An RNA of 177 nucleotides, treated with DMS and 2A3 and read out base by base. It was measured as part of the RMDB library TTRDES. For DMS the reverse transcriptase was MarathonRT. The 2A3 profile rests on 8,035 reads. Reactivities are given for positions 27 through 126.
RNA sequence: GGGAACGACUCGAGUAGAGUCGAAAAGAUAUGGAUCUGAUAGGACAUGCCAGGUAUCGGAAACGAUACUCUGGCAACAGCCUGCAGAUCCUAAGUCAAAACUUUACGUGGUUCGCCACGUAAAGAACUUUUAUCUUUACUUCGGUAAAGAUAAAAGAAAAGAAACAACAACAACAAC
Reactivity to DMS in 0.01 (KOAc 150mM, MgCl2 10mM, bicine 150mM(pH8.5), 24C), signal-to-noise 3, nucleotides 027 to 126: g000a020u000a030u020g000g000a010u010c000u000g000a060u010a010g020g000a030c100a120u020g010c000c000a010g000g000u000a000u000c000g010g000a020a010a020c000g010a010u000a000c000u020c010u000g010g020c000a020a020c190a100g000c010c000u000g010c000a010g000a010u000c000c000u000a000a060g000u000c010a140a110a120a190c010u010u000u000a000c010g030u000g000g000u010u010c300g020c000c000a010c010g000u000a000a010a000g000a100a160
Reactivity to 2A3 in 0.01 (KOAc 150mM, MgCl2 10mM, bicine 150mM(pH8.5), 24C), signal-to-noise 3, nucleotides 027 to 126: g000a000u000a000u030g000g000a010u000c000u020g040a290u180a140g000g020a040c130a170u300g000c010c000a010g010g000u010a000u000c010g000g000a030a010a000c010g000a000u030a020c050u070c020u210g000g000c020a000a000c010a000g000c000c010u000g000c010a000g000a010u000c000c000u010a010a000g000u010c000a030a020a130a240c000u000u000u010a000c000g000u000g000g040u030u080c250g050c100c000a000c010g000u010a000a000a010g000a000a010